[RMDB]
Source: RMDB library OK2TST, as collected in RNAgym. Structure probing data (DMS) for a 177-nucleotide construct. The reactions ran in a buffer of 150 mM KOAc, 10 mM MgCl2 and 150 mM bicine (pH 8.5), at 24 C.

RNA sequence: GGGAACGACUCGAGUAGAGUCGAAAAUGUGUGGCUGAGGUCGUGGCUGUGAUUCCGGCGCCUCUUGUCAUCUUAAUCAUGGCUAUAGCUCUCACUACAGCAAUUUACUAUGGUGCUAAAAGAGUGAGAGCGGGGAGUAUUUCGAUACUCCCCGCUCAAAAGAAACAACAACAACAAC
Reactivity to DMS in 0.01 (KOAc 150mM, MgCl2 10mM, bicine 150mM(pH8.5), 24C), signal-to-noise 1, nucleotides 027 to 126: u010g000u010g000u000g020g010c110u010g010a050g020g000u020c040g050u000g010g010c030u010g020u020g030a200u020u000c160c090g020g040c050g050c090c020u000c080u000u010g010u020c040a020u010c050u000u000a030a050u020c090a030u010g000g000c070u000a110u000a100g000c020u000c020u000c010a020c000u000a090c210a010g010c030a050a050u010u020u000a090c230u000a100u010g000g030u000g020c000u000a060a050a060a100g000a170g010u000g010a090